The record gives the reactivity of an RNA of 177 nucleotides to 2A3 and DMS.
DMS adducts were read by reverse transcription with MarathonRT.
The 2A3 profile rests on 3,430 reads.

RNA sequence: GGGAACGACUCGAGUAGAGUCGAAAAUGCGUAGGCGGGCCGCCAAGUGUUCUGUGAAAGCCCCGGGCUCAACCCGGGAACGGCAGGGCAUACUGGCGGUCUUGAGGGAUCUAGGGGCAGACAGAACCUAGAGCUCUAUUUUCGAAUAGAGCUCUAGAAAAGAAACAACAACAACAAC
Reactivity to 2A3 in 0.01 (KOAc 150mM, MgCl2 10mM, bicine 150mM(pH8.5), 24C), signal-to-noise 2, nucleotides 027 to 126: u090g020c050g030u060a020g070g000c010g010g000g000c000c000g000c000c000a040a020g010u000g010u010u000c000u000g030u010g150a170a090a070g030c000c000c000c000g030g000g000c070u100c190a130a190c020c000c000g000g010g010a020a000c010g090g000c000a000g020g000g000c010a000u030a070c010u010g010g000c000g010g010u000c000u000u010g000a020g000g000g010a020u030c030u080a030g000g000g060g000c020a020g080a120c040a050g060a040a010c000
Reactivity to DMS in 0.01 (KOAc 150mM, MgCl2 10mM, bicine 150mM(pH8.5), 24C), signal-to-noise 4, nucleotides 027 to 126: u030g010c060g000u020a070g010g010c060g000g030g000c000c000g000c000c010a020a090g010u010g000u000u000c010u010g010u000g010a090a160a190g020c280c000c000c000g030g000g000c110u070c300a110a300c030c000c000g010g010g020a000a020c060g000g000c000a010g060g000g000c000a000u010a060c070u000g000g010c010g010g010u010c010u000u000g000a120g010g000g000a180u000c060u010a050g020g000g000g010c060a090g010a100c130a080g000a110a070c140